[RMDB]
Overview: Structure probing data (2A3 and DMS) for a 177-nucleotide construct. For 2A3 the reverse transcriptase was SuperScript II with manganese.
RNA sequence: GGGAACGACUCGAGUAGAGUCGAAAAACAGGUUAGCUAGCCUAGGAUCCACCCGGUAUUUCGCAGGAAGGGGGGGGGGGCGUUGAGAUAGCUAGAGGAGGGGAAGCCUUCCUGGAGGACAGAGGGACAUAAAAGGAAGAUUCGUCUUCCUUUUAUGAAAAGAAACAACAACAACAAC
Reactivity to 2A3 in 0.01 (KOAc 150mM, MgCl2 10mM, bicine 150mM(pH8.5), 24C), signal-to-noise 5, nucleotides 027 to 126: a000c030a020g010g000u050u020a020g030c040u030a010g010c010c010u030a070g070g030a050u040c020c010a030c020c020c010g000g030u110a170u030u130u060c110g040c050a030g020g030a050a020g010g010g000g000g000g000g000g000g000g000g000c040g070u080u100g010a060g010a070u100a030g020c050u060a020g030a060g090g050a060g010g010g000g020a020a020g040c000c000u030u040c010c000u030g010g020a060g010g020a010c030a060g070a060g030g000g000a010
Reactivity to DMS in 0.01 (KOAc 150mM, MgCl2 10mM, bicine 150mM(pH8.5), 24C), signal-to-noise 8, nucleotides 027 to 126: a100c100a080g000g010u010u000a040g000c050u010a070g000c010c010u020a130g000g000a100u010c030c030a130c030c010c020g010g010u020a070u020u010u010c070g000c060a060g000g000a070a030g000g000g000g010g000g010g010g000g000g000g000c050g000u020u010g010a070g000a070u020a060g020c100u030a080g000a080g000g000a040g000g000g000g010a090a100g000c030c010u000u000c020c020u000g000g010a070g000g000a070c090a070g010a110g000g000g010a250